An RNA of 177 nucleotides, treated with 2A3 and DMS and read out base by base.
For DMS the reverse transcriptase was MarathonRT.
It was measured as part of the RMDB library M2PK50.
[RMDB]
RNA sequence: GGGAACGACUCGAGUAGAGUCGAAAAUCUUAGGAGUUCGCUCCUAAGAAAAGGGCGAGGCCGUGCCAGCUCUUCGGAGCUAUACUCGGCCAGUCACUCAGAAUGCGCUACCCUUCGGGGUAGCGAAGCGUGAAUUCAGAUUCGUCUGAAUUCACGCAAAAGAAACAACAACAACAAC
Reactivity to 2A3 in 0.01 (KOAc 150mM, MgCl2 10mM, bicine 150mM(pH8.5), 24C), signal-to-noise 1, nucleotides 027 to 126: u050c000u000u000a000g000g010a020g010u050u080c130g100c050u020c010c000u020a000a010g010a000a010a010a000g020g000g000c030g050a300g000g000c000c000g000u010g080c070c030a010g010c030u000c000u000u040c170g090g000a010g030c010u000a000u020a020c040u030c020g020g000c020c010a000g000u000c000a050c040u060c010a060g100a160a080u200g080c010g000c010u010a000c000c000c000u060u050c240g070g000g000g020u010a000g000c010g000a000a000
Reactivity to DMS in 0.01 (KOAc 150mM, MgCl2 10mM, bicine 150mM(pH8.5), 24C), signal-to-noise 1, nucleotides 027 to 126: u000c000u000u000a000g000g000a000g020u000u000c260g010c020u000c000c000u000a000a000g000a020a030a060a110g000g000g040c010g010a070g010g000c000c010g000u030g000c300c120a100g020c000u000c010u000u020c170g030g000a020g000c010u000a020u000a100c100u000c010g000g020c000c000a060g000u000c040a050c020u000c030a080g000a060a090u000g010c010g000c000u000a000c000c000c000u000u010c140g030g000g010g000u000a000g020c010g000a010a030